[RMDB]
RNA sequence: GGGAACGACUCGAGUAGAGUCGAAAAAACCAGCGUUGCUUCUCGCCUCUUCCUCGUCUUCUGUCCCGCUAGUCGAGCGGACAACCCGAGCACCGCCGAAGGCCUUUUUUCUUUUAUAGCAGCUUGGCUUCGCGGCGAGGGUGGAAGUGACCGCGGAGUCAAUAUCACACUUCGGUGUGAUAUUGACAAAAGAAACAACAACAACAAC
Reactivity to 2A3 in 0.01 (KOAc 150mM, MgCl2 10mM, bicine 150mM(pH8.5), 24C), signal-to-noise 1, nucleotides 027 to 156: a000a000c010c010a000g030c010g030u040u010g020c000u020u000c170u120c080g070c000c030u090c090u300u100c020c020u010c030g090u050c100u210u040c050u070g020u120c130c120c010g020c010u000a030g030u210c100g230a020g050c030g010g030a020c020a000a010c020c000c000g000a000g030c070a040c040c020g010c040c080g010a020a020g170g000c000c000u140u070u160u030u070u130c030u170u260u110u070a220u140a070g080c070a010g020c040u120u060g000g000c000u040u020c050g000c020g050g000c020g020a030g000g000g030u020g030g000a000a000g000u000g000a020c040c070g000c000g060g020a010